[RMDB]
The record gives the reactivity of an RNA of 177 nucleotides to 2A3 and DMS. In probing experiments dimethyl sulfate is read out at A N1 and C N3, which are open when not base-paired. For DMS, 1,872 sequencing reads were counted. The reactions ran in a buffer of 150 mM KOAc, 10 mM MgCl2 and 150 mM bicine (pH 8.5), at 24 C. For 2A3 the reverse transcriptase was SuperScript II with manganese.
RNA sequence: GGGAACGACUCGAGUAGAGUCGAAAAGACUGCAGGCAGGGCCAUUGGGCACAGGCGGAACAAAGGGAGCACGGCCUCAGCCCGGUGGAGCACUGAGGUGCUGCCAUGGGCAUGGCCAGCCUCCAACGCAUGGUAAAACGUUCGCGUUUUACCAUGCAAAAGAAACAACAACAACAAC
Reactivity to 2A3 in 0.01 (KOAc 150mM, MgCl2 10mM, bicine 150mM(pH8.5), 24C), signal-to-noise 1, nucleotides 027 to 126: g040a020c040u040g030c080a060g050g000c020a020g050g030g070c000c050a110u120u140g040g010g050c050a040c020a090g000g040c040g030g030a090a040c060a130a090a030g100g020g000a020g020c030a010c120g000g020c020c010u020c050a020g000c020c020c000g000g010u020g000g020a030g000c010a010c000u090g060a140g250g000u010g000c000u030g090c010c020a010u040g000g000g000c000a000u010g030g000c000c000a000g020c000c000u000c010c000a020a020c050
Reactivity to DMS in 0.01 (KOAc 150mM, MgCl2 10mM, bicine 150mM(pH8.5), 24C), signal-to-noise 3, nucleotides 027 to 126: g000a120c050u000g000c020a070g030g040c070a110g000g000g010c100c090a110u010u000g010g020g000c010a100c080a080g010g020c080g020g030a080a050c150a040a080a150g010g000g010a050g020c040a130c140g020g000c010c000u000c190a220g000c000c000c000g000g090u030g030g000a060g000c000a020c010u010g000a100g040g010u010g000c000u000g020c000c000a070u000g010g000g000c000a090u000g000g000c000c010a160g020c090c000u000c030c000a050a050c200